The record gives the reactivity of an RNA of 207 nucleotides to 2A3 and DMS. 2A3 adducts were read by reverse transcription with SuperScript II with manganese. The 2A3 profile rests on 3,800 reads.

RNA sequence: GGGAACGACUCGAGUAGAGUCGAAAAUAGGAGCGACGAACGGUGCUACGCGUUUGUAGUUGUCGCUUACUUUAUCGAUCGCGAUUUCGUCUGUAUCAAAGUUGAUCGUGUUCGGGAAGAACCCUAAGAAAAACGACGGUAGCGAUUCGAUUUUACGCAUAAUAGCCUGAUUCGUCAGGCUAUUAUGAAAAGAAACAACAACAACAAC
Reactivity to 2A3 in 0.01 (KOAc 150mM, MgCl2 10mM, bicine 150mM(pH8.5), 24C), signal-to-noise 6, nucleotides 027 to 156: u240a020g020g000a000g010c000g020a010c030g030a170a040c100g130g070u170g040c010u030a020c040g080c080g130u090u070u250g050u020a040g010u020u100g010u000c000g000c000u000u020a100c010u030u090u040a050u030c000g000a000u000c000g000c000g080a090u050u120u050c020g030u010c050u120g080u080a110u080c060a100a160a160g080u100u100g110a080u060c040g020u050g040u100u040c030g010g010g070a060a180g040a080a080c030c000c000u070a140a090g070a050a090a030a010a010c040g010a000c020g080g000u010a000g000c000g050a050u130u180c010g000a010u000u060u040u110a060c040g010
Reactivity to DMS in 0.01 (KOAc 150mM, MgCl2 10mM, bicine 150mM(pH8.5), 24C), signal-to-noise 5, nucleotides 027 to 156: u000a130g010g000a050g010c030g020a040c020g000a070a090c080g030g020u010g010c050u000a040c050g020c070g010u010u010u000g030u040a110g020u000u010g010u000c010g000c010u000u010a060c050u010u010u000a140u000c010g010a050u010c000g020c010g000a150u000u010u000c040g010u010c010u000g010u000a160u000c080a090a080a140g030u010u000g010a090u010c060g020u010g040u010u000c020g030g010g000a160a190g000a030a090c020c030c020u000a120a240g000a090a090a060a140a120c090g000a040c040g000g000u010a300g000c020g000a050u010u000c020g020a060u000u000u000u010a080c120g010